Source: RMDB library OK3TST, as collected in RNAgym. An RNA of 207 nucleotides, treated with DMS and 2A3 and read out base by base. Reactivities are given for positions 27 through 156.
[RMDB]
RNA sequence: GGGAACGACUCGAGUAGAGUCGAAAAUUGACUUGGGCACUGACAUGGUGAGUGUCACAACAGUCACAGAUCGAUAGUAGUGAGGUGUGAGCUGUGUCUUCAUUCACUGGCACUAUGCUCCCAGCAUCCAUGAGGCUGGCGUUGGGAAAAGAAAUUCGAUCUUCUACAAAUUCGUUUGUAGAAGAUCAAAAGAAACAACAACAACAAC
Reactivity to DMS in 0.01 (KOAc 150mM, MgCl2 10mM, bicine 150mM(pH8.5), 24C), signal-to-noise 3, nucleotides 027 to 156: u000u010g000a080c040u000u000g010g000g020c050a110c060u020g020a040c030a050u000g030g020u020g010a180g040u010g010u010c160a050c040a090a080c160a080g040u020c020a080c060a060g010a080u010c060g010a130u000a120g020u000a080g020u000g010a280g040g010u000g000u010g000a050g040c050u010g000u010g020u000c010u000u000c060a100u000u000c090a070c070u010g010g050c030a030c030u000a040u010g010c020u000c020c020c000a090g030c050a080u000c050c060a100u000g030a160g030g020c010u020g000g000c130g020u000u010g000g010g010a060a060a070a160g000a080a100a240u000u010c070
Reactivity to 2A3 in 0.01 (KOAc 150mM, MgCl2 10mM, bicine 150mM(pH8.5), 24C), signal-to-noise 5, nucleotides 027 to 156: u080u070g030a010c010u030u050g010g000g010c000a000c020u030g050a070c070a150u150g060g020u090g080a030g000u010g020u020c030a050c030a160a040c020a010g030u030c010a000c030a110g090a060u100c080g040a040u070a090g120u030a010g010u060g080a040g070g030u040g020u040g040a020g010c010u010g020u020g010u090c020u140u090c050a160u070u130c060a050c120u040g020g010c020a020c040u050a060u200g020c010u000c000c010c000a000g000c000a030u040c040c010a040u060g030a020g110g000c030u010g000g000c040g040u070u030g020g000g000a030a080a040a010g060a010a100a030u190u190c130

DMS adducts were read by reverse transcription with MarathonRT. High DMS reactivity at an A or C suggests that its Watson-Crick edge is free.